This 177-nucleotide RNA was probed chemically with 2A3 and DMS.
[RMDB]
RNA sequence: GGGAACGACUCGAGUAGAGUCGAAAAGAAACUUCUGGCCUCUCACCUGCUUAUGCACCAACAUAUGUUAGUGUUGAUGACAAGUAUAAGACGAGUGAUGAGCUUUGCGUGAAUCUUAAUUUACCCGGGCAAAUAUUAUGUUCGCAUAAUAUUUGCCAAAAGAAACAACAACAACAAC
Reactivity to 2A3 in 0.01 (KOAc 150mM, MgCl2 10mM, bicine 150mM(pH8.5), 24C), signal-to-noise 2, nucleotides 027 to 126: g000a010a020a010c010u060u020c010u090g070g000c030c020u000c000u000c010a000c010c020u030g000c010u040u000a000u010g000c020a010c020c000a010a010c020a010u070a040u190g240u140u150a120g020u010g030u010u010g000a080u040g030a030c020a120a120g020u000a030u010a030a020g040a090c040g000a030g050u010g010a070u120g010a000g020c020u100u100u110g040c030g020u030g050a020a060u000c000u000u080a100a050u090u030u120a100c000c010c000g020
Reactivity to DMS in 0.01 (KOAc 150mM, MgCl2 10mM, bicine 150mM(pH8.5), 24C), signal-to-noise 2, nucleotides 027 to 126: g020a090a160a200c030u000u000c020u010g010g020c060c060u000c050u000c000a000c010c010u010g020c010u000u000a020u000g030c010a070c040c000a000a000c000a000u000a070u010g050u020u010a170g030u000g010u000u000g030a110u010g000a160c210a090a080g020u030a030u010a030a010g020a120c120g000a060g020u000g020a040u010g000a070g000c070u000u000u000g000c260g010u000g000a050a120u000c000u010u000a080a080u000u000u000a150c000c000c000g030
For DMS the reverse transcriptase was MarathonRT.